Record summary
This 177-nucleotide RNA was probed chemically with 2A3 and DMS. The RNA was probed in 150 mM KOAc, 10 mM MgCl2 and 150 mM bicine (pH 8.5) at 24 C. As a SHAPE reagent, 2A3 marks flexible, mostly unpaired nucleotides at the ribose 2'-OH. It was measured as part of the RMDB library M2PK90. DMS adducts were read by reverse transcription with MarathonRT.
[RMDB]
RNA sequence: GGGAACGACUCGAGUAGAGUCGAAAAUUGUGGACAAGACCUUGGCGUAGUAUCCAAGGUUGUCAAGGUUCCUAUUGACUUAACAAUGAUUGAGUUUAUGUUAUGGUGUAAGGAUGGACAGGGGAAACGUACUCAUACGUUUCGACGUAUGAGUACGAAAAGAAACAACAACAACAAC
Reactivity to 2A3 in 0.01 (KOAc 150mM, MgCl2 10mM, bicine 150mM(pH8.5), 24C), signal-to-noise 6, nucleotides 027 to 126: u050u040g110u100g120g030a060c040a120a070g070a070c000c000u010u010g000g000c030g110u140a050g050u070a150u060c000c000a010a000g000g000u000u010g000u010c000a000a030g070g000u030u000c000c000u020a100u020u160g040a020c010u020u040a070a010c070a120a300u250g050a300u070u080g060a070g140u040u050u090a120u140g070u080u070a080u140g020g010u060g010u080a050a050g040g020a060u050g030g010a010c010a050g000g000g000g040a020a050a030
Reactivity to DMS in 0.01 (KOAc 150mM, MgCl2 10mM, bicine 150mM(pH8.5), 24C), signal-to-noise 8, nucleotides 027 to 126: u000u010g020u000g010g010a050c080a080a130g010a060c000c000u000u000g000g000c260g010u000a140g010u010a130u000c010c000a010a010g000g000u000u000g000u000c030a080a090g010g010u000u000c020c010u000a100u010u010g010a040c020u000u000a030a030c040a070a090u000g010a120u000u000g000a080g000u000u000u010a030u010g010u010u000a040u000g000g000u000g020u000a060a050g000g000a070u000g000g000a040c060a070g000g000g000g020a080a070a160